[RMDB]
RNA sequence: GGGAACGACUCGAGUAGAGUCGAAAAGGCGUACCUAAGGGCCAGGGAAUGCUGCUGACAUGAUGGGGGUGGCGAGGCCAAGGUCCCAGCCAGGUAGGCUUGAGUUGGUAUUGCUACAACCUUGUGACACCUACCGCAUCUUCGGAUGCGGUAGGUGAAAAGAAACAACAACAACAAC
Reactivity to DMS in 0.01 (KOAc 150mM, MgCl2 10mM, bicine 150mM(pH8.5), 24C), signal-to-noise 2, nucleotides 027 to 126: g030g020c030g000u000a030c020c010u020a080a190g070g020g000c000c030a150g000g000g010a100a060u000g010c000u000g010c030u000g000a210c070a040u010g020a050u040g030g010g030g010g030u010g000g030c070g030a130g010g000c000c020a090a050g030g000u020c020c040c070a080g000c010c100a110g000g020u020a050g010g010c010u000u000g010a120g010u000u000g000g000u030a030u000u000g000c000u000a040c090a070a110c050c030u020u010g040u040g000a300
Reactivity to 2A3 in 0.01 (KOAc 150mM, MgCl2 10mM, bicine 150mM(pH8.5), 24C), signal-to-noise 1, nucleotides 027 to 126: g030g000c060g000u020a000c010c030u000a020a070g160g010g020c030c020a010g110g040g000a040a180u120g040c010u010g020c040u050g100a100c010a110u300g080a170u220g140g030g010g010g020u000g000g030c080g000a040g050g190c030c010a020a050g000g000u100c000c000c030a020g030c000c000a100g110g240u250a090g110g000c070u020u160g060a060g050u120u060g070g000u050a110u030u300g000c000u010a010c020a000a060c000c000u050u200g160u050g010a000